About this RNA: This 177-nucleotide RNA was probed chemically with 2A3 and DMS. For 2A3 the reverse transcriptase was SuperScript II with manganese.

[RMDB]
RNA sequence: GGGAACGACUCGAGUAGAGUCGAAAAGAUAUGGACCGUCACAAGGCAACAGCGUGCGAUCGGAAACGAUCGUCACGACAUGCCUUAGGACGGUCCUAAGUCAAAACUCCCUUCUUCGGAAGGGAGACAUGUGGUUCAAGUUCGCUUGAACCACAUGAAAAGAAACAACAACAACAAC
Reactivity to 2A3 in 0.01 (KOAc 150mM, MgCl2 10mM, bicine 150mM(pH8.5), 24C), signal-to-noise 3, nucleotides 027 to 126: g030a010u050a020u120g010g010a010c040c000g010u010c020a020c020a210a010g020g010c040a210a060c080a300g070c000g000u010g000c000g010a000u010c010g020g050a050a020a040c010g010a020u010c000g030u080c010a010c000g010a000c010a060u170g040c010c020u010u020a060g040g000a000c000g000g000u000c000c000u000a000a000g000u000c010a000a000a010a080c000u000c010c010c000u010u010c030u030u050c300g220g000a000a000g010g010g000a000g010a010
Reactivity to DMS in 0.01 (KOAc 150mM, MgCl2 10mM, bicine 150mM(pH8.5), 24C), signal-to-noise 6, nucleotides 027 to 126: g010a060u000a300u000g000g010a010c000c000g000u010c000a050c050a020a010g000g010c000a050a090c290a170g000c020g020u010g010c030g010a010u010c000g000g000a110a090a230c010g000a010u000c000g010u010c020a010c010g000a040c150a260u000g000c000c000u000u000a090g000g000a010c000g010g000u010c010c000u000a000a060g010u010c020a080a070a120a150c000u000c000c000c000u000u000c000u000u010c190g030g000a020a000g000g000g000a010g010a020